[RMDB]
RNA sequence: GGGAACGACUCGAGUAGAGUCGAAAAUGGUGGUAACAUCCAGAGAAGCACACAGGUUGGUUUUCUUGGCUGCCACGAGCUUGAGCACUCGAGCGGCAAAGGCGGACUUGUGGACGUUAGCUCGAGCCCCAUCUGAGCUAUUCGUAGCUCAGAUGGGAAAAGAAACAACAACAACAAC
Reactivity to 2A3 in 0.01 (KOAc 150mM, MgCl2 10mM, bicine 150mM(pH8.5), 24C), signal-to-noise 4, nucleotides 027 to 126: u060g040g020u010g000g030u050a070a030c000a060u040c020c000a020g020a010g010a090a020g050c010a000c010a010c020a050g050g110u060u080g070g090u070u030u100u040c030u030u100g060g000c020u030g010c040c030a200c030g000a010g000c030u210u180g070a030g050c040a020c060u000c010g020a000g000c000g030g000c000a060a040a030g060g000c050g030g000a040c020u060u060g030u060g080g000a020c050g020u050u070a030g000c010u020c010g040a030g020c010
Reactivity to DMS in 0.01 (KOAc 150mM, MgCl2 10mM, bicine 150mM(pH8.5), 24C), signal-to-noise 4, nucleotides 027 to 126: u010g010g030u000g000g010u010a110a100c070a060u000c020c070a120g010a030g020a080a070g020c080a080c050a140c070a060g000g000u020u000g000g020u000u000u010u010c020u000u010g030g000c050u000g010c010c020a070c030g010a030g000c060u000u010g010a140g010c190a170c010u010c000g000a170g000c010g000g000c070a060a060a090g000g000c030g000g000a050c010u000u000g010u010g010g010a080c120g010u000u000a110g000c000u000c000g000a090g010c170
Structure probing data (2A3 and DMS) for a 177-nucleotide construct. High DMS reactivity at an A or C suggests that its Watson-Crick edge is free. The data come from the RNA Mapping Database (RMDB), library OK2TRN. Conditions: 150 mM KOAc, 10 mM MgCl2 and 150 mM bicine (pH 8.5), 24 C. For DMS the reverse transcriptase was MarathonRT.